[RMDB]
The record gives the reactivity of an RNA of 177 nucleotides to DMS and 2A3.
RNA sequence: GGGAACGACUCGAGUAGAGUCGAAAAGAUCAAUUUUUCAGUCUGGCAAAACAUCCACAUAAUCAUCCUUAAUCUGGAUCUCAAUCAGGUUGUGGAGUAUGAGCCUUGUGACCCAGCUUUGAAACUGCAAAGACUUAAUCUUCGGAUUAAGUCUUUGAAAAGAAACAACAACAACAAC
Reactivity to DMS in 0.01 (KOAc 150mM, MgCl2 10mM, bicine 150mM(pH8.5), 24C), signal-to-noise 6, nucleotides 027 to 126: g000a150u010c060a070a050u010u000u000u000u010c040a070g010u000c020u000g010g010c070a030a100a160a050c050a030u000c040c020a070c010a030u000a040a090u010c120a140u000c010c010u000u010a020a030u000c060u000g010g000a050u010c170u010c240a090a110u000c030a010g010g010u000u000g000u000g000g000a050g000u000a030u000g000a140g020c070c030u010u000g010u000g000a300c300c000c000a030g010c060u000u010u000g000a060a040a070c240u010g000
Reactivity to 2A3 in 0.01 (KOAc 150mM, MgCl2 10mM, bicine 150mM(pH8.5), 24C), signal-to-noise 3, nucleotides 027 to 126: g050a100u160c060a040a100u060u040u050u050u070c020a010g060u030c020u050g000g020c030a040a000a050a120c010a120u010c020c010a040c000a050u120a080a080u110c040a050u020c020c020u070u080a070a050u060c020u020g090g000a060u040c070u060c150a160a220u060c020a020g010g020u020u020g000u020g000g010a010g010u020a060u070g020a010g030c020c000u030u050g020u010g010a020c000c000c000a000g000c010u090u100u110g070a110a080a030c030u070g000
The data come from the RNA Mapping Database (RMDB), library OK2TRN. For DMS, 5,863 sequencing reads were counted.